Structure probing data (2A3 and DMS) for a 177-nucleotide construct. For DMS the reverse transcriptase was MarathonRT. Values cover nucleotides 27 to 126. It was measured as part of the RMDB libraries RFM100 and RFMREP. The RNA was probed in 150 mM KOAc, 10 mM MgCl2 and 150 mM bicine (pH 8.5) at 24 C.

RNA sequence: GGGAACGACUCGAGUAGAGUCGAAAAUGAACUCUUGUCAGAGUUUCCAAGGAAUUAAUAUUUUCGGUAAAAUGUGCUAAUGUAAAGAGUUAGAAGAUUAGUGGUGGGUAAUGAAAGUAAUGCAUUCCAUGGUCGUAUCAUUCGUGAUACGACCAUGAAAAGAAACAACAACAACAAC
Reactivity to 2A3 in 0.01 (KOAc 150mM, MgCl2 10mM, bicine 150mM(pH8.5), 24C), signal-to-noise 3, nucleotides 027 to 126: u120g020a030a020c000u020c010u050u070g170u150c110a020g020a010g000u030u010u060c040c000a020a030g040g000a020a050u090u060a160a180u070a090u040u040u030u030c030g020g100u170a050a080a090a160u100g010u030g050c020u040a050a060u120g040u130a150a090a010g120a030g020u000u110a030g020a100a030g050a110u100u020a010g020u000g020g010u110g000g000g030u030a060a030u040g040a060a050a000g090u070a100a050u070g050c020a030u040u000c030
Reactivity to DMS in 0.01 (KOAc 150mM, MgCl2 10mM, bicine 150mM(pH8.5), 24C), signal-to-noise 4, nucleotides 027 to 126: u060g000a040a020c030u000c000u010u010g000u010c090a090g010a140g010u000u010u020c040c060a100a160g020g000a060a040u010u020a090a100u020a060u010u000u020u010c050g030g000u020a130a030a110a070u010g010u050g010c060u010a010a040u000g010u030a070a090a120g020a120g010u000u000a050g010a070a060g000a040u010u000a040g010u020g000g010u010g000g000g020u000a040a070u010g010a020a030a050g030u000a030a070u030g010c170a050u000u020c050